[RMDB]
RNA sequence: GGGAACGACUCGAGUAGAGUCGAAAAUGUUGGGGAUUAAACCCUGAUUGAGUUCAGCCCACAUACUUUGUUGAUUGGUUGUCAAUCAUGGCAAAAGUGCACGCUACUUUGAUAACCUUUUACAUGCGAGCUGGACAUAUUUCGAUAUGUCCAGCUCAAAAGAAACAACAACAACAAC
Reactivity to 2A3 in 0.01 (KOAc 150mM, MgCl2 10mM, bicine 150mM(pH8.5), 24C), signal-to-noise 1, nucleotides 027 to 126: u170g000u080u030g000g000g000g000a090u300u020a100a000a000c000c120c170u040g000a000u040u060g100a000g300u100u300c020a020g000c020c070c000a000c000a000u190a140c090u080u120u020g000u010u140g040a200u040u040g010g000u000u000g020u000c000a000a000u010c000a000u000g040g000c000a000a000a170a170g060u150g080c300a050c100g070c000u000a010c020u030u030u000g000a050u000a000a000c000c000u040u100u000u000a040c070a130u000g080c110
Reactivity to DMS in 0.01 (KOAc 150mM, MgCl2 10mM, bicine 150mM(pH8.5), 24C), signal-to-noise 1, nucleotides 027 to 126: u010g000u000u000g010g000g040g040a090u000u060a080a260a150c000c040c020u020g010a010u000u000g020a220g000u000u030c080a030g000c000c000c010a060c090a060u070a080c250u040u000u000g000u010u000g000a010u000u000g030g000u010u000g030u030c000a000a010u000c110a100u010g000g000c070a130a030a040a090g010u070g000c090a060c170g010c110u000a020c160u020u030u000g010a010u000a030a020c000c000u000u040u000u000a050c040a170u000g020c300
Chemical mapping of a 177-nucleotide RNA with 2A3 and DMS.
High 2A3 reactivity points to a flexible backbone, as in loops and unpaired stretches.
The RNA was probed in 150 mM KOAc, 10 mM MgCl2 and 150 mM bicine (pH 8.5) at 24 C.